An RNA of 207 nucleotides, treated with 2A3 and read out base by base. It was measured as part of the RMDB library RSTRND. The 2A3 profile rests on 716 reads. 2A3 adducts were read by reverse transcription with SuperScript II with manganese.

RNA sequence: GGGAACGACUCGAGUAGAGUCGAAAAUAAAGCAUACGUUACAUGCUAAGUUAAAUAUAACUAACAACGAAUUACAAGUAGCCUAGUUAAUAGGUGCCAAAACAAUAGAGUUGCUCUAACAUCUAUUUGAGGUUCAAAGAUUUGAGCUAUUUCUUACGGGUAUUAAUAGGUUCGCCUAUUAAUACCCAAAAGAAACAACAACAACAAC
Reactivity to 2A3 in 0.01 (KOAc 150mM, MgCl2 10mM, bicine 150mM(pH8.5), 24C), signal-to-noise 2, nucleotides 027 to 156: u060a020a160a000g010c010a040u040a150c110g170u140u150a070c080a110u010g020c040u030a000a070g050u150u070a030a130a140u180a120u140a240a100c070u140a100a070c050a100a040c100g070a090a080u210u210a150c070a160a070g090u030a000g010c000c000u000a000g000u060u120a090a080u020a180g000g010u010g010c000c000a000a000a030a030c000a020a000u010a000g030a000g010u020u190g020c020u010c000u010a000a010c000a020u000c000u020a000u010u000u000g010a000g010g000u100u140c040a100a010a000g030a040u040u090u120g000a000g000c000u010a050u000u000u000c000u000u000a020c080